This 207-nucleotide RNA was probed chemically with 2A3. The data come from the RNA Mapping Database (RMDB), library M2RFPK. The reactions ran in a buffer of 150 mM KOAc, 10 mM MgCl2 and 150 mM bicine (pH 8.5), at 24 C. For 2A3 the reverse transcriptase was SuperScript II with manganese.
RNA sequence: GGGAACGACUCGAGUAGAGUCGAAAAGACGCCUUUAGAAGAAGAGGCUAGGGGGUAUUCCGGUGUGGGAUACUUAGUAAUAUGCAACGCUAAUUGCGUAAGAUUGUAGGACGGAAUUUACAGUCUUUAGAGAUAAGCACGUUCGCGUGCUUAUCAAACAGCUUCGUAGGUUCGCCUACGAAGCUGUAAAAGAAACAACAACAACAAC
Reactivity to 2A3 in 0.01 (KOAc 150mM, MgCl2 10mM, bicine 150mM(pH8.5), 24C), signal-to-noise 1, nucleotides 027 to 156: g030a090c100g010c010c000u000u050u020a140g040a280a040g040a010a010g020a090g020g000c020u020a070g100g040g000g000g000u010a070u050u000c010c010g160g060u190g030u250g070g000g000a000u000a070c070u010u060a080g020u070a000a130u130a070u250g080c080a040a000c010g000c050u060a070a130u120u160g020c000g000u050a030a000g080a030u000u020g000u020a000g000g050a000c110g090g000a040a060u130u000u000a070c060a000g040u000c000u000u000u050a160g060a000g000a020u000a000a000g020c000a000c000g010u030u050c200g050c040g050u000g000c000u000u010a010u000c010a000a000